[RMDB]
RNA sequence: GGGAACGACUCGAGUAGAGUCGAAAAUAAUGUUACAGCAAAACCGUCACAAGGUCUAAAAGUGAUUACAACAUCAACGUGGCUAAAAGAGCACAUGGAGAAAAAGGGAAUUCACGUAGAACAAGUAAUACCAAGAGGAGUAAAUGACGAAAUGGCAAGUGUGUUAUCCUUUCGAGGAUAACACACUAAAAGAAACAACAACAACAAC
Reactivity to 2A3 in 0.01 (KOAc 150mM, MgCl2 10mM, bicine 150mM(pH8.5), 24C), signal-to-noise 3, nucleotides 027 to 156: u110a000a100u040g050u050u080a040c020a000g030c030a000a040a060a020c030c000g010u020c010a030c000a130a060g020g010u020c030u160a130a070a010a050g050u040g040a030u060u090a060c080a140a020c010a120u020c000a010a050c060g010u010g030g050c010u030a040a020a090a030g110a020g010c050a060c000a120u120g050g030a070g040a060a040a020a010a020g040g020g010a020a020u100u080c020a020c070g040u060a010g020a040a000c010a060a020g030u070a060a040u010a040c010c040a070a040g010a010g040g020a020g050u090a040a070a070u050g030a020c060g060a000a030a100u070g020g010c030a060
Reactivity to DMS in 0.01 (KOAc 150mM, MgCl2 10mM, bicine 150mM(pH8.5), 24C), signal-to-noise 1, nucleotides 027 to 156: u010a040a110u010g020u000u000a160c050a070g000c040a110a050a110a080c160c000g040u000c070a230c020a210a100g020g000u020c050u000a020a070a150a170g030u000g040a200u000u000a000c040a060a120c090a000u000c030a090a090c030g040u000g020g020c000u000a110a060a030a090g010a040g020c040a010c000a040u000g000g000a030g000a060a040a180a130a090g000g000g010a000a070u000u000c070a070c090g000u000a040g010a050a060c040a070a150g000u040a090a090u000a080c050c050a000a210g000a080g000g000a090g000u000a010a110a100u020g010a230c110g000a040a130a150u010g020g000c050a030